[RMDB]
RNA sequence: GGGAACGACUCGAGUAGAGUCGAAAAGGUGCAGUUCGUCUGAUGGCCGGGGCCGCGGCGCCGCACCGGCUGUUUCGCCUGUUGGCGACGGUCUGGGUCGGCAGCCUGCUGACGAUCGGCUACGCGACAUGAUACUAGGCUUCGGCCUAGUAUCAUGAAAAGAAACAACAACAACAAC
Reactivity to 2A3 in 0.01 (KOAc 150mM, MgCl2 10mM, bicine 150mM(pH8.5), 24C), signal-to-noise 5, nucleotides 027 to 126: g070g010u120g020c040a060g040u050u060c020g030u030c110u180g160a230u090g140g000c010c010g020g000g060g000c030c000g000c010g020g000c010g000c010c000g000c010a020c010c000g000g000c010u020g030u070u130u020c010g030c010c000u270g160u300u300g050g010c000g000a010c000g000g000u050c100u300g030g000g000u040c010g010g010c000a010g000c000c020u100g010c030u060g020a070c020g070a230u040c000g010g000c000u030a020c040g010c010g020a020
Reactivity to DMS in 0.01 (KOAc 150mM, MgCl2 10mM, bicine 150mM(pH8.5), 24C), signal-to-noise 4, nucleotides 027 to 126: g010g020u000g000c070a080g000u000u000c030g020u000c080u020g010a180u000g000g010c000c010g020g010g010g010c010c030g010c020g010g010c020g000c020c010g010c080a030c000c010g010g030c010u000g000u010u000u010c010g010c010c000u010g010u010u010g030g010c000g000a020c010g000g010u000c010u020g040g010g000u010c010g000g000c010a090g040c020c000u000g040c020u010g010a030c030g000a160u000c010g000g000c010u000a040c060g010c050g000a130